Source information
Chemical mapping of a 177-nucleotide RNA with 2A3 and DMS. DMS (dimethyl sulfate) methylates the pairing face of unpaired adenines and cytosines. The reactions ran in a buffer of 150 mM KOAc, 10 mM MgCl2 and 150 mM bicine (pH 8.5), at 24 C. The 2A3 profile rests on 610 reads.
RNA sequence: GGGAACGACUCGAGUAGAGUCGAAAAGAAAGCGCGAGACCAAGAUGCUGAAAAAGAGCAUCGGUCGAGGCAGCGAAGCUGUCGAGCCUAAACAGCGAAGAGGCCGGAAUUUGCUGGAGCGCGAAAAGGGAUUAAGCUACUUCGGUAGCUUAAUCCCAAAAGAAACAACAACAACAAC
Reactivity to 2A3 in 0.01 (KOAc 150mM, MgCl2 10mM, bicine 150mM(pH8.5), 24C), signal-to-noise 1, nucleotides 027 to 126: g020a050a000a080g000c090g000c030g000a100g010a060c000c000a160a030g000a000u000g000c000u000g120a010a040a000a000a230g120a060g060c000a000u050c000g080g000u000c010g000a000g000g000c000a000g000c020g020a050a020g050c020u050g150u100c010g000a020g050c000c000u070a140a050a000c020a040g040c000g000a060a060g050a100g140g010c000c020g050g000a060a090u020u000u000g000c020u000g070g030a060g020c020g000c020g060a000a000a000a230
Reactivity to DMS in 0.01 (KOAc 150mM, MgCl2 10mM, bicine 150mM(pH8.5), 24C), signal-to-noise 1, nucleotides 027 to 126: g010a100a010a140g010c020g040c000g000a180g000a000c000c020a110a120g050a030u000g000c020u000g000a010a130a010a280a040g000a000g000c000a000u060c010g000g000u000c000g060a170g010g090c010a060g000c000g000a240a020g000c000u000g000u000c000g040a140g040c000c080u050a000a120a250c040a090g030c000g000a030a000g000a140g030g000c010c050g000g000a060a140u000u000u000g000c060u000g000g000a210g000c000g000c000g000a070a030a250a020